The record gives the reactivity of an RNA of 177 nucleotides to DMS and 2A3. Reactivities are given for positions 27 through 126. Conditions: 150 mM KOAc, 10 mM MgCl2 and 150 mM bicine (pH 8.5), 24 C. For DMS, 1,375 sequencing reads were counted. For DMS the reverse transcriptase was MarathonRT.

[RMDB]
RNA sequence: GGGAACGACUCGAGUAGAGUCGAAAAGAGCGUCGAGAGACGAAGAGAAGUGCAUAGAUCCACAACGGAGAACGUAAUAAUGCACGCCUGUGGAUUAGUGUCCGGAACAACGGGCACAAGAGGCAGACCUAGCACGGAGGUUCGCCUCCGUGCUAGGAAAAGAAACAACAACAACAAC
Reactivity to DMS in 0.01 (KOAc 150mM, MgCl2 10mM, bicine 150mM(pH8.5), 24C), signal-to-noise 2, nucleotides 027 to 126: g000a090g000c010g040u040c000g000a280g000a110g000a060c020g010a110a040g040a120g000a210a070g030u000g000c020a020u020a030g010a020u000c020c010a010c090a040a080c080g000g000a110g050a040a070c160g000u010a030a130u040a010a080u000g000c010a040c000g000c040c110u000g000u000g020g000a300u020u000a130g000u000g000u030c000c000g050g000a150a050c300a130a100c000g000g010g030c000a000c030a020a080g000a080g000g010c070a130g000a070
Reactivity to 2A3 in 0.01 (KOAc 150mM, MgCl2 10mM, bicine 150mM(pH8.5), 24C), signal-to-noise 1, nucleotides 027 to 126: g000a000g020c020g000u000c000g030a040g000a000g000a030c020g000a100a000g090a000g010a230a040g050u000g070c030a020u010a110g080a010u010c030c000a020c000a150a060c000g000g010a190g110a090a020c070g030u000a060a070u060a210a030u140g130c010a020c040g040c020c000u020g090u140g120g000a090u000u130a090g000u000g000u000c000c000g000g000a170a050c080a220a010c050g000g000g010c000a000c000a000a000g030a000g090g000c000a010g000a140